[RMDB]
RNA sequence: GGGAACGACUCGAGUAGAGUCGAAAAUGACAGAUGUACUUUUCCCCGGCCAAAAAUACAGUAGCGAUUGUAAUGUCGUACGGUAUUCUUUGGACGGUAAUUUCAGAACAGAGGUUGAUCCCGACCUAGCGCGCAAACUUCGGUUUGCGCAAAAGAAACAACAACAACAAC
Reactivity to 2A3 in 0.01 (KOAc 150mM, MgCl2 10mM, bicine 150mM(pH8.5), 24C), signal-to-noise 3, nucleotides 027 to 129: u130g080a020c070a020g200a040u060g020u130a110c030u130u050u020u060c020c040c000c000g030g000c000c000a000a000a000a000a000u020a000c010a000g010u030a020g250c000g020a000u060u050g100u250a130a110u300g000u000c000g000u000a010c000g010g000u020a010u010u000c120u000u010u000g000g000a000c020g000g000u020a100a100u010u130u150c090a060g020a120a010c040a080g010a000g060g000u000u000g000a050u030c000c000c000g010a010c000c000u000a020g080c040
The data come from the RNA Mapping Database (RMDB), library 15KLIB. Structure probing data (2A3) for a 170-nucleotide construct. The 2A3 profile rests on 4,421 reads. The RNA was probed in 150 mM KOAc, 10 mM MgCl2 and 150 mM bicine (pH 8.5) at 24 C.